RNA sequence: GGGAACGACUCGAGUAGAGUCGAAAAGAACAUCAGUUCGCUGAUGUUCAAAGGCCCAGUAGUGUUGGGUCGCGAAAGGCCAUACAUAAACAUUCACUCAGAAAACAACGUCCUUCGGGACGUUGAACAACUCUCAAGUGUUCGCACUUGAGAGUUGAAAAGAAACAACAACAACAAC
Reactivity to 2A3 in 0.01 (KOAc 150mM, MgCl2 10mM, bicine 150mM(pH8.5), 24C), signal-to-noise 2, nucleotides 027 to 126: g000a010a000c000a010u010c010a010g030u070u040c130g070c160u010g000a000u010g010u020u010c010a030a000a010g020g000c020c000c010a000g050u080a000g010u000g070u090u120g100g050g050u040c040g000c070g200a140a070a040g040g000c040c000a010u080a090c040a050u210a050a150a000c040a050u060u150c020a030c050u090c030a030g030a050a060a020a030c000a000a000c000g000u000c000c000u030u040c080g000g000g000a010c000g000u000u000g000a000a000
Reactivity to DMS in 0.01 (KOAc 150mM, MgCl2 10mM, bicine 150mM(pH8.5), 24C), signal-to-noise 3, nucleotides 027 to 126: g000a020a010c000a000u000c000a000g030u000u010c220g020c000u000g010a020u000g010u000u000c000a020a140a090g010g020c000c000c020a050g010u000a080g000u000g010u010u010g000g020g030u000c000g020c100g010a120a120a110g000g000c010c000a070u000a070c130a060u020a120a040a040c090a060u020u000c070a030c020u000c070a070g010a080a080a060a220c020a000a000c000g000u000c000c000u000u000c140g020g000g000a030c000g000u000u000g000a040a110